[RMDB]
This 207-nucleotide RNA was probed chemically with 2A3.
The 2A3 profile rests on 490 reads.
RNA sequence: GGGAACGACUCGAGUAGAGUCGAAAAGACGUAAUACGCGCAAAUCCACAAACGCCAACGAUGAGCGUUUCGCUGUAGCCGCUUAAGGCAACAGCCGGGGCCGCCUGAGCCCUGUUACCAAAGACGGGAAACUCGAUGCCAUUCGUGGCAUCGAGAACAAUUUCCGAGGGUUCGCCCUCGGAAAUUGAAAAGAAACAACAACAACAAC
Reactivity to 2A3 in 0.01 (KOAc 150mM, MgCl2 10mM, bicine 150mM(pH8.5), 24C), signal-to-noise 1, nucleotides 027 to 156: g030a010c000g010u000a080a050u160a280c140g000c000g010c050a060a130a020u060c030c010a120c130a190a040a000c040g000c080c010a130a080c170g300a250u140g030a040g050c000g000u000u020u090c050g000c000u000g000u050a060g030c000c000g100c110u300u250a120a060g010g000c000a010a000c000a010g020c000c000g000g000g000g020c000c050g020c010c020u050g000a010g000c000c000c010u000g010u030u150a030c050c030a000a000a000g140a020c010g000g050g020a000a030a050c000u000c000g010a000u000g010c000c000a050u050u090c220g080u070g000g010c000a000u000c000g010a000g000a000a010
About this RNA
The reactions ran in a buffer of 150 mM KOAc, 10 mM MgCl2 and 150 mM bicine (pH 8.5), at 24 C. Reactivities are given for positions 27 through 156.